[RMDB]
RNA sequence: GGGAACGACUCGAGUAGAGUCGAAAAGAAUUGGUAUGUAUGCUACUUCUUCCAGUAGCUGCGUCAUAACAUCAAGGUUAUGCAUACUGAGCCGAAGCUCAGCUUCGGUCCUCCAAGGAAGACCAAAUACAGCUCAGCCCGUUCGCGGGCUGAGCAACCUAAAUAAGCUGUUCGCAGCUUAUUUAGGAAAAGAAACAACAACAACAAC
Reactivity to 2A3 in 0.01 (KOAc 150mM, MgCl2 10mM, bicine 150mM(pH8.5), 24C), signal-to-noise 4, nucleotides 027 to 156: g070a030a090u000u030g000g000u000a000u000g010u010a020u300g000c000u000a000c010u040u080c000u010u000c020c000a000g010u000a000g000c000u020g020c010g010u020c000a010u000a010a010c010a080u210c190a150a060g300g000u000u000a000u010g000c010a010u010a020c000u010g000a000g000c000c000g000a000a000g000c030u050c300a030g000c000u020u000c010g000g000u000c000c020u050c040c030a040a040g000g000a000a000g000a000c020c060a010a090a010u190a100c070a020g000c000u000c000a000g000c020c000c020g030u060u080c180g010c010g110g000g010c000u000g000a000g000c010a000a000
Reactivity to DMS in 0.01 (KOAc 150mM, MgCl2 10mM, bicine 150mM(pH8.5), 24C), signal-to-noise 1, nucleotides 027 to 156: g020a090a150u000u000g000g010u000a030u010g000u000a060u000g040c010u020a110c030u000u000c010u000u110c060c050a300g050u020a010g030c000u000g000c080g000u000c000a030u010a050a030c010a300u030c210a240a090g050g040u000u000a070u000g020c070a090u000a030c010u020g030a220g000c000c010g020a060a050g010c010u000c180a100g000c010u000u000c030g000g010u010c020c010u010c060c120a040a120g030g020a060a130g010a160c120c020a020a070a110u000a060c140a240g000c030u000c020a040g040c000c000c000g010u000u030c300g000c030g140g000g030c000u010g000a000g010c000a000a000

The record gives the reactivity of an RNA of 207 nucleotides to 2A3 and DMS.
DMS adducts were read by reverse transcription with MarathonRT.